[RMDB]
RNA sequence: GGGAACGACUCGAGUAGAGUCGAAAAGCGGGUCAGCGAGUCGGGCAUGCGGAAGCUGAAGCUGGCCUUGCCCUGGGCGUCGGUGACCAGCUCCGGCUGCCAGGCGGCGGUGUCGACGUCCUCGCGACACCCGCCUCGAGUUCGCUCGAGGCGGGUGAAAAGAAACAACAACAACAAC
Reactivity to DMS in 0.01 (KOAc 150mM, MgCl2 10mM, bicine 150mM(pH8.5), 24C), signal-to-noise 2, nucleotides 027 to 126: g010c020g000g010g020u000c020a040g020c000g010a070g030u010c090g000g020g030c040a040u010g030c080g010g010a130a090g020c010u000g000a090a260g000c000u000g020g000c000c020u010u000g020c010c040c020u000g010g020g000c000g010u000c000g000g000u000g000a050c010c010a100g010c040u000c010c030g010g020c030u000g000c040c050a090g000g000c260g010g000c050g010g000u000g000u000c000g010a030c010g010u000c020c010u000c090g010c070g010a230
Reactivity to 2A3 in 0.01 (KOAc 150mM, MgCl2 10mM, bicine 150mM(pH8.5), 24C), signal-to-noise 2, nucleotides 027 to 126: g000c020g020g030g000u040c020a010g010c020g050a030g140u140c060g060g000g050c060a060u240g070c090g140g080a080a040g000c030u060g050a070a010g040c000u020g050g010c000c060u020u100g010c000c020c010u040g010g000g000c000g020u020c000g020g030u080g260a140c020c010a020g000c010u040c020c000g130g000c070u090g070c030c020a050g050g000c080g010g020c020g020g010u020g010u020c020g010a010c000g010u030c010c010u070c000g050c000g040a010

This 177-nucleotide RNA was probed chemically with DMS and 2A3. It was measured as part of the RMDB library OK2TST. Values cover nucleotides 27 to 126. The reactions ran in a buffer of 150 mM KOAc, 10 mM MgCl2 and 150 mM bicine (pH 8.5), at 24 C. For 2A3 the reverse transcriptase was SuperScript II with manganese.